[RMDB]
RNA sequence: GGGAACGACUCGAGUAGAGUCGAAAAUGCCUGCACCGCAAGGUGCAGGGGGAGGAAAGUCCGGACUCCACAGGGCAGGGUGUUGGCUAACAGCCAUCCACGGCAACGUGCGGAAUAGGGCCACAGAUGUGUGCAUACUAUUCGUAGUAUGCACACAAAAAGAAACAACAACAACAAC
Reactivity to 2A3 in 0.01 (KOAc 150mM, MgCl2 10mM, bicine 150mM(pH8.5), 24C), signal-to-noise 4, nucleotides 027 to 126: u110g050c000c000u000g000c000a000c000c000g020c090a050a050g010g000u000g000c000a000g000g000g000g040g030a060g000g100a140a020a010g030u010c010c000g010g030a030c030u030c020c020a020c040a060g020g010g030c030a010g040g010g040u080g000u070u080g020g010c010u060a180a010c040a080g000c000c000a020u030c010c020a050c020g010g000c010a030a030c070g040u050g030c050g000g020a040a060u090a130g040g040g000c030c010a030c020a030g130a090
Reactivity to DMS in 0.01 (KOAc 150mM, MgCl2 10mM, bicine 150mM(pH8.5), 24C), signal-to-noise 5, nucleotides 027 to 126: u050g020c000c000u000g010c000a000c000c020g000c300a110a120g010g010u010g010c010a030g000g010g000g000g000a140g000g010a050a060a070g020u020c020c020g000g000a120c060u010c050c030a100c130a130g010g010g010c040a080g000g000g030u010g020u020u000g000g000c020u000a100a130c210a160g020c000c000a060u030c060c030a060c030g000g010c170a080a050c050g000u010g000c090g000g000a070a040u030a090g000g000g000c030c030a050c120a080g010a140